[RMDB]
An RNA of 177 nucleotides, treated with DMS and 2A3 and read out base by base. 2A3 adducts were read by reverse transcription with SuperScript II with manganese. For 2A3, 8,378 sequencing reads were counted. For DMS the reverse transcriptase was MarathonRT.
RNA sequence: GGGAACGACUCGAGUAGAGUCGAAAAGCCGCGCAAGUUGCUGGCCCGGUUCUUCGUCUGGCUGACCGUCGGACUCUACGAUCCGCCCGUGCGCGAGCUGAUGGGCUACCGGUGGUUGCGCCGCGACCCUUGUUUCACUAUUCGUAGUGAAACAAGGAAAAGAAACAACAACAACAAC
Reactivity to DMS in 0.01 (KOAc 150mM, MgCl2 10mM, bicine 150mM(pH8.5), 24C), signal-to-noise 9, nucleotides 027 to 126: g020c000c120g010c040g010c080a090a120g000u010u010g010c050u000g010g010c050c040c020g010g010u000u000c040u000u000c070g010u010c030u000g020g010c010u010g010a080c140c060g010u000c030g010g000a120c060u000c050u010a100c140g010a050u000c030c060g010c040c030c070g010u010g020c060g010c260g000a070g010c010u000g000a110u010g000g010g010c060u000a070c050c020g010g020u010g010g000u000u000g010c080g010c020c060g000c060g010a110c180
Reactivity to 2A3 in 0.01 (KOAc 150mM, MgCl2 10mM, bicine 150mM(pH8.5), 24C), signal-to-noise 3, nucleotides 027 to 126: g010c000c000g000c000g010c020a060a070g060u140u080g040c020u050g030g000c010c020c000g030g040u070u020c040u050u120c030g040u010c090u100g020g000c010u040g010a040c020c000g020u040c020g050g070a160c080u020c030u100a060c050g040a050u020c020c020g020c030c040c040g070u090g030c070g000c010g020a040g000c020u060g010a150u180g030g020g000c050u090a120c030c020g040g030u050g030g010u050u040g030c070g000c020c030g030c040g040a050c020